This 177-nucleotide RNA was probed chemically with DMS and 2A3. Values cover nucleotides 27 to 126. As a SHAPE reagent, 2A3 marks flexible, mostly unpaired nucleotides at the ribose 2'-OH. For DMS the reverse transcriptase was MarathonRT.
[RMDB]
RNA sequence: GGGAACGACUCGAGUAGAGUCGAAAACACACCUGGUUCGCCAGGUGUGAAAUAAAAGCACACCAACCAAAAUAAACAAGAGCAUGGAUGGAAAAUAAAUAAAAACUGUAAUGUUCGCAUUACAGAACCCUAUAUGUAGCUUCGGCUACAUAUAGGGAAAAGAAACAACAACAACAAC
Reactivity to DMS in 0.01 (KOAc 150mM, MgCl2 10mM, bicine 150mM(pH8.5), 24C), signal-to-noise 1, nucleotides 027 to 126: c010a020c000a000c000c000u000g000g000u000u010c210g060c000c010a000g000g000u020g000u010g000a000a070a070u010a030a080a010a150g000c050a110c070a050c070c070a020a090c040c000a050a050a080a050u020a090a070a100c170a010a060g010a050g020c100a020u000g000g000a110u000g000g000a050a050a110a060u000a080a070a080u000a040a060a090a130a130c020u010g000u000a000a010u000g000u000u000c200g000c020a010u000u000a000c000a010g010a050a100
Reactivity to 2A3 in 0.01 (KOAc 150mM, MgCl2 10mM, bicine 150mM(pH8.5), 24C), signal-to-noise 2, nucleotides 027 to 126: c020a000c000a000c010c000u000g000g080u050u040c190g030c030c000a000g000g000u000g000u000g010a000a000a000u020a000a020a010a010g110c040a020c010a030c100c000a010a050c000c020a190a050a060a140u180a090a180a070c080a100a000g030a010g040c020a040u060g000g030a010u040g020g050a120a020a060a060u100a030a120a020u160a040a130a020a010a030c000u000g000u000a010a000u000g030u010u040c270g000c060a000u000u000a000c010a010g020a030a010